The record gives the reactivity of an RNA of 207 nucleotides to DMS and 2A3. As a SHAPE reagent, 2A3 marks flexible, mostly unpaired nucleotides at the ribose 2'-OH. The data come from the RNA Mapping Database (RMDB), library OK3TST. The DMS profile rests on 5,950 reads. For 2A3, 4,337 sequencing reads were counted.
RNA sequence: GGGAACGACUCGAGUAGAGUCGAAAACACGUCAAAGAUAGCUGUCACACUGGCCAACGGUUGCGGAAUAUCCGUUAAGUGAUCAACCAAGUGAAUUGUACCGUACACAUGCGUCAUAUAGUCUUGCAAGUCUGGUCGCAAUUCGCCGUAUCCUGACUGCGAAGUAGUAAUUCGUUACUACUUCGCAAAAAGAAACAACAACAACAAC
Reactivity to DMS in 0.01 (KOAc 150mM, MgCl2 10mM, bicine 150mM(pH8.5), 24C), signal-to-noise 3, nucleotides 027 to 156: c020a070c090g040u000c050a100a110a130g020a130u000a090g020c060u000g010u000c030a060c030a090c010u000g000g010c040c010a060a150c040g010g010u010u010g020c030g020g030a170a140u000a020u000c010c010g030u010u010a050a100g000u000g010a110u010c050a080a140c070c020a110a070g030u010g010a060a070u000u020g010u000a030c010c040g020u000a100c000a050c050a070u000g020c030g020u010c100a110u000a140u010a100g010u020c070u000u010g060c040a070a180g020u000c010u000g020g030u000c060g040c010a020a130u010u000c020g010c000c010g010u000a100u000c010c030u020g000a240c290
Reactivity to 2A3 in 0.01 (KOAc 150mM, MgCl2 10mM, bicine 150mM(pH8.5), 24C), signal-to-noise 6, nucleotides 027 to 156: c070a010c020g070u100c090a080a070a030g050a070u090a060g040c030u050g030u090c010a030c010a010c090u070g060g010c020c030a050a020c020g020g000u050u080g020c050g020g050a160a090u120a090u120c020c000g010u040u040a060a060g050u050g070a040u070c030a020a050c050c000a060a030g020u030g070a020a010u020u010g010u010a010c020c000g040u110a020c060a000c010a060u070g020c010g050u010c100a030u150a040u050a290g050u080c060u070u120g020c030a030a080g000u010c070u140g000g010u020c060g000c040a010a030u030u020c010g000c010c010g010u040a050u030c000c020u090g050a090c090